Chemical mapping of a 177-nucleotide RNA with DMS and 2A3.

RNA sequence: GGGAACGACUCGAGUAGAGUCGAAAAACGACACAAUUCGUUGUGUCGUAAUGGAAAAGGCUAGGACCGGCCAGACAAAGGUCCCAAAAGAUCGAAAGAUCACACGCCACGAAUUCGUUCGUGGCAAGAACAAAGACGUGUUCGCACGUCUUUGUUCAAAAGAAACAACAACAACAAC
Reactivity to DMS in 0.01 (KOAc 150mM, MgCl2 10mM, bicine 150mM(pH8.5), 24C), signal-to-noise 2, nucleotides 027 to 126: a000c020g000a040c000a000c000a030a030u000u010c280g000u000u000g020u000g000u000c000g000u000a000a090u000g000g000a060a120a140a170g020g050c000u010a110g010g010a030c010c000g000g000c010c000a050g030a080c300a030a040a060g010g000u010c010c030c300a040a010a080a070g000a000u010c020g000a090a070a140g000a010u000c010a120c300a070c200g010c000c000a010c000g010a010a070u000u000c200g010u000u000c000g000u000g000g000c010a000a010
Reactivity to 2A3 in 0.01 (KOAc 150mM, MgCl2 10mM, bicine 150mM(pH8.5), 24C), signal-to-noise 2, nucleotides 027 to 126: a000c000g000a010c000a010c000a000a040u080u110c170g060u130u020g000u010g000u000c010g000u020a020a090u100g040g020a050a070a060a160g000g000c000u060a060g050g000a000c010c000g000g010c020c040a010g020a020c160a010a110a010g010g010u000c000c010c000a020a130a040a020g010a000u020c000g030a030a020a040g010a010u000c000a000c000a010c100g010c000c000a000c000g000a010a010u080u070c180g090u050u010c000g000u010g020g000c000a010a000

The reactions ran in a buffer of 150 mM KOAc, 10 mM MgCl2 and 150 mM bicine (pH 8.5), at 24 C.